[RMDB]
RNA sequence: GGGAACGACUCGAGUAGAGUCGAAAAGAGACUGCUGGACUCGCCGCCCGAGCCCGAGCAUGGGCCCCAGUUCCGAACGAAGAGACCGCCGGGGAAGGGGGGCGAACCGACGGGAGUUCAAUGGUAAGGACUGCUCAGUUCGCUGAGCAGAAAAGAAACAACAACAACAAC
Reactivity to 2A3 in 0.01 (KOAc 150mM, MgCl2 10mM, bicine 150mM(pH8.5), 24C), signal-to-noise 7, nucleotides 027 to 129: g050a010g020a020c020u040g030c040u080g060g010a050c010u010c030g020c010c010g180c020c000c010g030a090g160c010c000c000g070a060g030c050a140u230g020g010g020c010c000c000c000a020g010u080u020c050c080g010a070a030c010g010a020a050g040a010g030a050c010c030g000c010c010g020g000g000g010a000a040g020g010g010g010g000g010c010g000a010a010c010c010g090a070c010g010g020g000a020g000u030u020c020a050a060u080g040g010u070a050a050g050g020a030
Reactivity to DMS in 0.01 (KOAc 150mM, MgCl2 10mM, bicine 150mM(pH8.5), 24C), signal-to-noise 7, nucleotides 027 to 129: g030a110g020a070c060u000g060c120u030g040g000a080c040u000c060g000c080c050g020c000c030c000g030a260g000c060c010c010g040a110g010c100a080u000g000g010g050c060c010c030c000a140g000u030u020c090c120g060a110a090c060g040a130a050g000a090g010a150c070c040g020c060c060g010g020g050g040a070a220g040g000g020g000g040g040c000g020a060a040c000c060g000a070c070g010g000g010a040g000u030u020c060a050a050u000g000g010u000a060a060g020g030a080
An RNA of 170 nucleotides, treated with 2A3 and DMS and read out base by base. 2A3 adducts were read by reverse transcription with SuperScript II with manganese. The DMS profile rests on 24,612 reads. For 2A3, 16,552 sequencing reads were counted. The data come from the RNA Mapping Database (RMDB), library 15KLIB. The RNA was probed in 150 mM KOAc, 10 mM MgCl2 and 150 mM bicine (pH 8.5) at 24 C.